RNA sequence: GGGAACGACUCGAGUAGAGUCGAAAAGAUAUGGAUUGUCUCCAGGACACGAAGAACUCGGAAACGAGGGAGUGUUAGGAGAGCAAUCCUAAGUCAAAAGCGAGGAUAUCUUCGGAUAUCCUCGCAAGUUGGUAUACACCUUCGGGUGUAUACCAACAAAAGAAACAACAACAACAAC
Reactivity to 2A3 in 0.01 (KOAc 150mM, MgCl2 10mM, bicine 150mM(pH8.5), 24C), signal-to-noise 1, nucleotides 027 to 126: g010a020u130a070u170g000g000a000u000u010g020u020c000u000c010c020a130g300g130a010c010a010c030g300a300a090g030a080a020c010u000c000g020g090a130a070a030c000g000a020g000g000g000a050g010u040g000u020u030a040g000g000a010g050a040g030c000a000a000u000c000c000u010a090a020g090u030c040a060a020a190a100g020c000g000a000g000g000a000u060a000u020c000u080u000c300g000g010a000u010a000u010c100c000u010c000g000c010a010a000
Reactivity to DMS in 0.01 (KOAc 150mM, MgCl2 10mM, bicine 150mM(pH8.5), 24C), signal-to-noise 1, nucleotides 027 to 126: g000a040u010a300u010g000g040a020u010u010g000u010c000u000c000c000a110g020g030a000c000a030c000g000a100a140g000a110a090c010u010c000g000g000a140a110a180c000g030a010g030g040g030a090g020u010g000u000u000a130g010g000a000g000a030g010c010a000a010u000c000c030u020a010a130g020u040c010a120a110a090a170g000c010g010a020g000g000a000u000a000u000c000u000u030c120g010g000a010u000a000u000c000c000u000c000g020c010a000a000